Description:
Structure probing data (DMS and 2A3) for a 177-nucleotide construct. The reactions ran in a buffer of 150 mM KOAc, 10 mM MgCl2 and 150 mM bicine (pH 8.5), at 24 C. DMS adducts were read by reverse transcription with MarathonRT. For 2A3, 1,544 sequencing reads were counted.

RNA sequence: GGGAACGACUCGAGUAGAGUCGAAAAGCACGGAGACUUGCUGUGAUAAUACAAGCGCGCAAUUCACGAAAUAGCUAGCAAUGACCGCAGCAAUCUUUCGCGAAAUAAUCACUUCAUACCUCUGAGCUAUCAGCCUGGAGUUCGCUCCAGGCUGAUAAAAAGAAACAACAACAACAAC
Reactivity to DMS in 0.01 (KOAc 150mM, MgCl2 10mM, bicine 150mM(pH8.5), 24C), signal-to-noise 1, nucleotides 027 to 126: g000c070a010c000g040g010a030g000a080c150u000u000g000c000u130g000u000g000a000u030a010a130u000a040c130a170a090g000c010g000c100g040c040a070a190u020u000c040a200c140g000a140a060a000u000a080g000c120u000a140g020c000a070a050u000g000a300c270c010g000c070a000g000c040a000a000u020c130u000u000u030c090g000c030g030a000a160a070u020a180a000u010c150a210c020u000u000c090a000u060a050c220c050u000c000u030g000a060g000c040
Reactivity to 2A3 in 0.01 (KOAc 150mM, MgCl2 10mM, bicine 150mM(pH8.5), 24C), signal-to-noise 3, nucleotides 027 to 126: g020c010a000c110g000g020a010g000a090c150u060u030g000c000u000g020u000g010a080u060a210a050u060a050c040a060a090g020c000g020c020g040c070a050a140u160u030c150a060c190g070a060a010a030u110a040g010c020u080a010g020c000a030a120u190g060a090c030c030g020c010a000g000c000a000a040u010c050u020u130u140c040g000c010g070a110a040a010u240a000a030u040c010a010c050u080u040c020a070u030a180c040c010u050c030u050g040a000g000c020